[RMDB]
Structure probing data (2A3) for a 177-nucleotide construct. The reactions ran in a buffer of 150 mM KOAc, 10 mM MgCl2 and 150 mM bicine (pH 8.5), at 24 C. For 2A3 the reverse transcriptase was SuperScript II with manganese.
RNA sequence: GGGAACGACUCGAGUAGAGUCGAAAAGCAACAAUAUUAUGUAUACGGAAUAUACUAGGAGUUCUCUUCAAGGAUAGAGGAAUCCUCAAAAUGGAAUCCAUAUUUCUACAUACUAAUAUUACGAUUAACCCACUACCUGGUUCGCCAGGUAGUGGGUAAAAGAAACAACAACAACAAC
Reactivity to 2A3 in 0.01 (KOAc 150mM, MgCl2 10mM, bicine 150mM(pH8.5), 24C), signal-to-noise 3, nucleotides 027 to 126: g090c050a000a140c040a130a020u010a050u020u020a130u300g010u000a020u000a020c030g020g030a000a000u030a010u020a080c190u080a050g010g010a070g090u070u000c090u000c000u050u030c050a120a060g200g010a100u060a090g170a060g030g240a070a010u000c010c040u030c020a050a120a070a060u090g050g030a000a010u050c010c000a030u000a030u020u040u000c020u050a090c040a140u000a010c000u040a000a000u020a000u030u000a020c040g060a050u090u300a060